[RMDB]
Structure probing data (DMS) for a 177-nucleotide construct. Reactivities are rounded to 0.1 and cut off at 0 and 3. Source: RMDB library TTRDES, as collected in RNAgym. Conditions: 150 mM KOAc, 10 mM MgCl2 and 150 mM bicine (pH 8.5), 24 C. For DMS, 5,659 sequencing reads were counted.

RNA sequence: GGGAACGACUCGAGUAGAGUCGAAAAGAUAUGGAGUGAAGAGGCUUUGAUCUACUGUGUCGGAAACGACAUGUAGGGAGCCUCUUCACUCCUAAGUCAAACAACCCACAGUUCGCUGUGGGUUGAAGUUAAAGCAACAGUUCGCUGUUGCUUUAACAAAAGAAACAACAACAACAAC
Reactivity to DMS in 0.01 (KOAc 150mM, MgCl2 10mM, bicine 150mM(pH8.5), 24C), signal-to-noise 3, nucleotides 027 to 126: g010a010u000a030u010g000g000a030g010u000g000a000a000g010a020g030g020c010u000u010u020g000a020u000c000u000a010c000u010g030u000g010u000c000g020g020a010a010a030c010g030a000c000a000u000g020u000a000g000g000g000a000g020c000c010u000c000u000u000c000a000c010u000c000c010u000a000a050g000u000c010a170a170a300c030a020a020c000c000c000a000c000a010g030u000u020c300g020c000u000g030u000g010g010g010u000u000g010a020a070